[RMDB]
RNA sequence: GGGAACGACUCGAGUAGAGUCGAAAAGUGGCCAAGGAUGCCAAGCUGCUGACGCCCAUCGCCCUGGCCACCGGACCCGACGGCAGUCUCUAUGUGGGUGACUUCAAUCUGGUGCGUCGCAUCACGACUGGCUCGAUUAGUUCGCUAAUCGAGCCAGAAAAGAAACAACAACAACAAC
Reactivity to DMS in 0.01 (KOAc 150mM, MgCl2 10mM, bicine 150mM(pH8.5), 24C), signal-to-noise 2, nucleotides 027 to 126: g020u000g000g000c000c030a040a100g010g000a130u010g000c070c160a090a210g020c030u000g020c070u020g050a050c110g010c020c030c030a140u000c080g010c010c040c000u000g000g000c000c010a010c010c010g020g010a150c010c000c020g010a150c120g010g010c060a050g000u020c040u010c040u010a090u020g030u020g000g000g000u000g010a060c110u000u000c110a110a100u010c190u000g020g010u000g030c060g010u000c050g000c060a070u000c070a090c120g010a170
Reactivity to 2A3 in 0.01 (KOAc 150mM, MgCl2 10mM, bicine 150mM(pH8.5), 24C), signal-to-noise 1, nucleotides 027 to 126: g020u010g000g030c040c000a040a040g100g000a020u060g050c060c040a070a010g110c060u120g000c110u200g020a050c070g020c010c040c020a010u080c030g000c000c010c000u000g040g000c000c000a000c020c000g060g060a070c000c040c000g010a040c030g000g040c010a060g100u000c010u000c020u160a190u200g030u120g020g040g000u040g040a040c040u080u090c140a020a110u000c040u110g030g000u060g020c020g070u010c010g030c010a030u060c020a010c060g150a100